An RNA of 177 nucleotides, treated with DMS and 2A3 and read out base by base. For DMS, 2,180 sequencing reads were counted. Reactivities are given for positions 27 through 126.
[RMDB]
RNA sequence: GGGAACGACUCGAGUAGAGUCGAAAACUGGUUCUAACACCGAGUUUGCCUCUAAUUCCUCGGUGUUGUCACUUGUUAACUUCACCGUUGAUCCUCAAAAAGCUUAUCUCGAUUUCGUCAAUGCGGGGAAUCCAUCUUACUUCGGUAAGAUGGAUUCAAAAGAAACAACAACAACAAC
Reactivity to DMS in 0.01 (KOAc 150mM, MgCl2 10mM, bicine 150mM(pH8.5), 24C), signal-to-noise 3, nucleotides 027 to 126: c010u000g010g010u000u010c070u000a030a040c020a030c010c010g010a040g010u000u010u000g020c130c040u010c100u000a070a160u000u000c160c010u000c000g000g000u000g000u000u000g010u000c060a010c080u020u000g010u010u000a060a080c070u000u010c050a060c040c030g020u000u000g020a090u000c020c010u010c090a050a060a120a130a070g000c070u000u000a090u020c030u000c020g020a140u000u000u000c070g030u000c070a030a090u000g010c060g020g000g000
Reactivity to 2A3 in 0.01 (KOAc 150mM, MgCl2 10mM, bicine 150mM(pH8.5), 24C), signal-to-noise 2, nucleotides 027 to 126: c010u020g050g000u050u010c030u090a030a020c010a000c020c000g000a000g010u060u060u090g060c030c000u070c050u090a130a160u170u030c010c000u010c010g000g030u010g000u010u010g010u000c000a010c050u010u040g000u040u090a040a040c030u020u050c040a040c070c010g020u000u070g030a060u040c000c000u000c010a060a030a050a020a020g010c030u080u060a050u110c030u020c020g070a060u030u090u010c020g020u000c080a080a090u070g040c030g010g030g030